Chemical mapping of a 177-nucleotide RNA with DMS and 2A3. For DMS the reverse transcriptase was MarathonRT. For 2A3, 13,584 sequencing reads were counted. 2A3 adducts were read by reverse transcription with SuperScript II with manganese.
[RMDB]
RNA sequence: GGGAACGACUCGAGUAGAGUCGAAAACACAUGCCAUCAUUUCGGUUAAGAACUCUUAACUCUGAUGGCUUUCGAGUUAUGUGGUGCAUUGAAGCUCUCCCUUCAAUUCAACGUACCGUUCCGUCAAUAUAUAUUCUUGGUUCGCCAAGAAUAUAUAAAAAGAAACAACAACAACAAC
Reactivity to DMS in 0.01 (KOAc 150mM, MgCl2 10mM, bicine 150mM(pH8.5), 24C), signal-to-noise 9, nucleotides 027 to 126: c150a100c170a070u010g000c000c000a010u000c000a070u010u000u010c290g000g000u000u000a010a010g000a260a150c300u020c010u000u000a000a010c000u000c130u000g000a010u000g000g010c010u000u000u000c060g000a040g000u000u000a050u000g010u000g010g010u000g000c040a040u000u000g000a030a030g010c080u000c080u000c060c060c000u000u010c090a040a080u000u000c030a030a030c040g020u000a020c020c010g010u000u000c010c010g010u000c080a070a130
Reactivity to 2A3 in 0.01 (KOAc 150mM, MgCl2 10mM, bicine 150mM(pH8.5), 24C), signal-to-noise 7, nucleotides 027 to 126: c080a010c020a060u140g000c020c000a000u000c020a030u040u190u260c060g020g000u010u000a030a050g060a300a270c060u040c000u300u000a000a000c000u000c030u110g000a000u000g000g000c000u000u020u000c010g000a000g000u070u050a080u160g110u110g040g070u030g000c020a020u010u040g020a010a010g020c020u010c020u090c090c010c000u020u050c020a040a050u030u020c010a040a020c030g020u020a020c000c010g000u020u000c020c010g090u060c030a100a000
Reactivities are given for positions 27 through 126.